This 207-nucleotide RNA was probed chemically with DMS and 2A3. The DMS profile rests on 1,970 reads.
[RMDB]
RNA sequence: GGGAACGACUCGAGUAGAGUCGAAAAACGGUCAUAUACGUAUGACCGAAUGAGCAUAACAGGGCCACCCCAAAGCGUUCACAUUGUGGCCCCUGUCAGAUUCUGGGAAAUCUGCGAGUUCUGCUAAAUUAGGUAACUCUCUUCGGAGAGUUACCAAACGUCUUAAUAGCUUCGGCUAUUAAGACGUAAAAGAAACAACAACAACAAC
Reactivity to DMS in 0.01 (KOAc 150mM, MgCl2 10mM, bicine 150mM(pH8.5), 24C), signal-to-noise 1, nucleotides 027 to 156: a140c010g000g010u000c000a000u000a110u040a080c150g050u000a000u000g000a020c020c000g000a010a030u000g000a140g050c000a080u010a080a010c060a080g000g010g030c010c010a010c010c050c010c020a040a090a200g000c130g000u000u000c130a110c090a150u020u000g010u000g010g040c080c010c010c020u010g020u020c000a030g000a050u000u000c020u030g000g050g000a130a010a030u000c030u000g010c000g020a110g000u000u000c150u010g000c040u000a110a080a180u010u000a100g010g000u000a010a030c010u000c010u000c000u010u000c300g020g010a020g000a040g000u000u020a000c010c010a020a040
Reactivity to 2A3 in 0.01 (KOAc 150mM, MgCl2 10mM, bicine 150mM(pH8.5), 24C), signal-to-noise 1, nucleotides 027 to 156: a000c000g000g000u000c000a000u020a020u030a080c190g110u010a040u000g000a010c010c000g000a010a040u060g020a000g030c000a010u010a090a070c020a030g000g000g000c000c000a010c000c020c000c030a010a200a090g120c080g130u240u250c030a050c040a170u200u250g000u000g000g030c050c000c000c000u030g070u060c000a000g000a020u020u000c040u260g250g080g000a030a030a010u010c000u000g000c010g000a120g030u070u010c070u050g010c000u020a090a110a130u290u140a070g010g010u000a010a000c000u000c000u000c000u030u090c210g040g000a000g000a000g000u000u000a000c000c000a000a000